[RMDB]
RNA sequence: GGGAACGACUCGAGUAGAGUCGAAAAAUCGGUUAAAGGGAUGUUCUUUAGUCCCAGACUCUCUAUAUAAUUAGCACCAUACACUGAGAACAUUAUGACCAGUCCAGGAGAUCCUUCUAUCACAGGAGCUAGAUAAGGAUUUCGAUCCUUAUCUAGCAAAAGAAACAACAACAACAAC
Reactivity to 2A3 in 0.01 (KOAc 150mM, MgCl2 10mM, bicine 150mM(pH8.5), 24C), signal-to-noise 3, nucleotides 027 to 126: a000u030c040g030g030u110u060a180a120a060g120g000g020a030u030g040u200u000c020u040u100u130a050g010u000c000c020c000a000g010a020c020u020c000u000c020u000a020u010a020u030a300a140u160u120a010g010c030a020c020c020a010u030a120c070a030c060u050g020a010g030a100a010c020a050u090u110a090u220g030a010c010c020a020g020u000c010c000a010g000g030a040g040a050u010c020c000u030u000c030u080a150u100c030a030c020a100g020g030a020
Reactivity to DMS in 0.01 (KOAc 150mM, MgCl2 10mM, bicine 150mM(pH8.5), 24C), signal-to-noise 4, nucleotides 027 to 126: a070u010c070g010g000u010u010a050a130a090g020g000g010a040u000g000u000u010c030u000u000u010a150g020u000c000c010c020a150g010a070c030u000c030u000c020u000a110u010a100u010a100a100u010u000a050g020c070a070c040c030a050u000a060c100a040c060u000g010a070g010a050a060c050a040u000u010a080u000g000a050c020c020a080g020u010c020c040a080g000g010a080g000a050u000c040c020u000u000c040u000a070u010c090a070c120a080g000g020a180
Source: RMDB library OK2TRN, as collected in RNAgym. Structure probing data (2A3 and DMS) for a 177-nucleotide construct. The 2A3 profile rests on 3,489 reads. DMS adducts were read by reverse transcription with MarathonRT.